An RNA of 207 nucleotides, treated with DMS and 2A3 and read out base by base. The RNA was probed in 150 mM KOAc, 10 mM MgCl2 and 150 mM bicine (pH 8.5) at 24 C. Source: RMDB library M2RFPK, as collected in RNAgym. For 2A3 the reverse transcriptase was SuperScript II with manganese. For 2A3, 1,664 sequencing reads were counted.
RNA sequence: GGGAACGACUCGAGUAGAGUCGAAAAGCACAAGACUUCGAACAUUAUAGCAGUUAGUAGUUGCCUCAACCCAUUGCAAUAUAUGGGACAGUAGAGGUCGCAAGCCUAUACUGUGCGGUGAACAUUCAAAAGGGAUGGUACUUCGGUACCAUCCCAAGCUGAAAGAAUUGUUCGCAAUUCUUUCAGCAAAAGAAACAACAACAACAAC
Reactivity to DMS in 0.01 (KOAc 150mM, MgCl2 10mM, bicine 150mM(pH8.5), 24C), signal-to-noise 2, nucleotides 027 to 156: g030c020a090c050a030a100g020a150c070u000u000c020g020a050a160c090a060u000u000a100u000a170g010c040a060g020u000u010a170g000u000a180g020u000u000g000c000c000u000c080a090a210c000c000c000a040u000u000g000c090a100a160u020a100u000a020u000g000g010g000a030c000a040g000u010a040g010a030g060g060u000c060g000c230a100a220g020c040c000u000a060u000a010c020u000g020u000g000c100g040g020u000g000a070a080c060a090u010u000c020a040a060a150a120g000g020g000a030u020g000g010u000a000c030u000u030c300g050g020u000a030c010c000a000u000c000c000c000a010a000
Reactivity to 2A3 in 0.01 (KOAc 150mM, MgCl2 10mM, bicine 150mM(pH8.5), 24C), signal-to-noise 3, nucleotides 027 to 156: g030c010a010c020a090a060g050a070c100u130u120c140g080a150a050c030a090u100u120a090u130a110g020c040a000g000u030u130a020g020u060a030g020u050u050g020c000c020u030c030a050a060c000c000c000a000u000u030g020c000a040a000u030a020u000a000u210g000g010g000a000c000a000g050u070a020g000a000g020g020u020c010g030c040a030a050g030c010c000u020a010u030a030c010u020g020u030g040c000g000g040u040g040a060a030c020a070u100u300c140a200a120a060a110g000g010g000a000u020g030g000u000a000c000u010u080c100g030g000u000a000c010c000a010u000c000c000c000a000a000